[RMDB]
RNA sequence: GGGAACGACUCGAGUAGAGUCGAAAAUGUGGUACAGCUCCCAGCACCUGGUGGGAGAUGAGUCCUAGGGGCAGGGCUGGGACAUCCCCAGGCCCCACUGCCACCAACUCCUACCCCUAGGCUAAACAUAUGAAAAGAUCUUCGGAUCUUUUCAUAUAAAAGAAACAACAACAACAAC
Reactivity to 2A3 in 0.01 (KOAc 150mM, MgCl2 10mM, bicine 150mM(pH8.5), 24C), signal-to-noise 2, nucleotides 027 to 126: u060g010u020g040g000u080a160c060a080g020c030u000c000c030c000a030g130c040a170c080c120u180g110g040u020g020g040g010a040g020a080u110g030a000g040u090c010c000u020a000g010g000g010g000c030a030g000g030g000c010u000g000g030g050a050c010a090u150c010c020c000c000a050g230g080c050c040c000c000a030c030u040g000c000c000a010c020c000a030a080c030u090c000c000u040a040c000c000c010c010u000a000g020g000c000u060a090a060a010c060
Reactivity to DMS in 0.01 (KOAc 150mM, MgCl2 10mM, bicine 150mM(pH8.5), 24C), signal-to-noise 5, nucleotides 027 to 126: u000g010u000g010g030u000a150c180a100g010c040u000c010c000c010a060g000c020a200c170c130u010g010g020u000g010g000g010a050g010a050u000g010a080g010u000c000c000u010a010g010g000g000g010c040a020g010g000g000c040u000g000g000g020a130c170a080u010c100c010c000c050a120g000g000c040c010c010c100a040c090u010g010c010c020a070c040c120a030a060c070u000c010c010u000a110c000c000c000c000u000a010g000g010c080u000a040a070a090c150